[RMDB]
This 207-nucleotide RNA was probed chemically with DMS and 2A3. The data come from the RNA Mapping Database (RMDB), library M2RFPK. For DMS, 3,225 sequencing reads were counted. For 2A3, 5,258 sequencing reads were counted. 2A3 adducts were read by reverse transcription with SuperScript II with manganese.

RNA sequence: GGGAACGACUCGAGUAGAGUCGAAAAUAGCGAAGUAGGAUUUUAUGCCUCAAGUGUUCACAGGCUGGGGAGUCGCCGUGAAACGAAAAGCAGAAAGCGUGCUGCUUACGAUAUAAUUUCCGCACCCAUAAGAAGUCUCUGUUCGCAGAGACUUCAAGGAAGUAUGAAUGUUCGCAUUCAUACUUCCAAAAGAAACAACAACAACAAC
Reactivity to DMS in 0.01 (KOAc 150mM, MgCl2 10mM, bicine 150mM(pH8.5), 24C), signal-to-noise 2, nucleotides 027 to 156: u010a080g020c020g030a060a100g020u000a070g040g010a100u000u000u000u000a050u010g010c000c010u000c060a080a280g020u010g000u000u000c010a000c040a110g030g020c040u010g000g000g010g010a090g010u000c020g000c050c020g000u000g000a050a060a060c020g000a120a070a030a040g010c070a070g010a060a040a080g020c100g020u010g020c030u000g020c010u010u000a050c030g010a110u000a050u000a040a160u000u000u000c010c020g010c040a100c010c000c030a130u020a110a170g010a010a030g010u000c000u010c000u010g010u000u020c270g060c020a020g000a060g010a000c000u000u000c010a010a140
Reactivity to 2A3 in 0.01 (KOAc 150mM, MgCl2 10mM, bicine 150mM(pH8.5), 24C), signal-to-noise 4, nucleotides 027 to 156: u100a010g030c010g030a060a020g050u080a060g030g060a030u060u070u060u100a090u240g030c020c000u040c050a080a050g050u030g070u150u040c030a030c070a100g020g000c020u090g030g020g010g030a050g080u100c030g000c020c010g020u030g020a030a030a000c010g010a150a000a000a030g000c020a000g040a060a130a020g110c090g080u120g040c010u000g000c010u020u040a050c030g010a010u010a000u020a160a070u060u020u000c020c000g030c030a050c010c010c000a040u070a130a080g000a010a000g000u000c000u000c000u000g040u040u050c130g000c050a000g000a000g000a000c000u000u000c000a000a000